Source: RMDB library OK1LIB, as collected in RNAgym. Structure probing data (2A3 and DMS) for a 177-nucleotide construct. The 2A3 profile rests on 4,072 reads. Reactivities are rounded to 0.1 and cut off at 0 and 3.
[RMDB]
RNA sequence: GGGAACGACUCGAGUAGAGUCGAAAAGCGAUCAAUAAUAAGUCGACAACUCGAAAGAGUCGCAUGGAAACAUGCCUACUAAUGCGUCCAAUGUAGAUCGACGAUUAGGACGCAGAAGAUCGCGAAAGGAUUAUGAGGUGUUCGCACCUCAUAAUCCAAAAGAAACAACAACAACAAC
Reactivity to 2A3 in 0.01 (KOAc 150mM, MgCl2 10mM, bicine 150mM(pH8.5), 24C), signal-to-noise 4, nucleotides 027 to 126: g000c000g000a000u010c020a020a000u060a190a010u100a150a010g020u000c000g000a010c020a130a010c030u000c020g030a090a050a050g000a030g010u010c010g000c000a000u010g000g000a010a080a000c000a000u000g000c000c010u030a050c020u060a070a080u060g010c000g010u020c010c010a070a080u230g000u020a050g030a190u070c060g020a010c010g000a010u000u090a020g000g000a000c000g000c010a000g020a030a020g000a000u000c000g000c000g010a040a020a020
Reactivity to DMS in 0.01 (KOAc 150mM, MgCl2 10mM, bicine 150mM(pH8.5), 24C), signal-to-noise 3, nucleotides 027 to 126: g010c000g000a000u000c020a100a080u080a070a070u020a100a170g010u010c000g010a080c150a140a000c000u000c000g010a170a120a110g000a030g000u010c120g000c000a000u000g020g000a130a090a180c000a000u000g000c000c000u000a000c040u000a140a080u020g010c000g000u000c000c000a030a090u040g000u000a040g000a300u010c030g030a000c010g020a140u040u030a140g000g000a020c000g000c020a070g000a060a060g000a000u000c010g010c000g000a120a100a100